[RMDB]
RNA sequence: GGGAACGACUCGAGUAGAGUCGAAAAGCUCUGGAAUUGAGGACCCUCUAACAAUAAUCCAAAACUACUUCGCAGAGUAAUCUGCCGAAUCGUAGGAUGCCCAUUACUAUCUAUUUUUGGAGCAUCUAAAACUGUCAGUGCUUCGGCACUGACAGAAGAGGUAACAGAUGUUCGCAUCUGUUACCUCAAAAGAAACAACAACAACAAC
Reactivity to 2A3 in 0.01 (KOAc 150mM, MgCl2 10mM, bicine 150mM(pH8.5), 24C), signal-to-noise 2, nucleotides 027 to 156: g040c020u020c020u040g000g060a110a020u120u030g020a020g050g000a040c000c030c000u060c120u150a110a070c060a040a150u180a060a050u050c020c040a010a030a020a070c020u050a000c000u000u000c000g000c000a000g000a000g080u120a140a120u000c000u020g060c100c080g040a000a010u090c050g010u030a030g030g050a000u010g000c000c000c020a020u040u020a050c030u110a120u180c060u100a250u130u060u000u000u000g030g000a090g000c000a010u010c020u060a040a000a010a130c000u000g000u000c000a000g010u000g000c010u000u100c110g040g000c000a000c000u000g000a010c000a000g010a000a020
Source information:
Chemical mapping of a 207-nucleotide RNA with 2A3. Values are in units of 0.01, from 0 to 300, in steps of 10. The reactions ran in a buffer of 150 mM KOAc, 10 mM MgCl2 and 150 mM bicine (pH 8.5), at 24 C.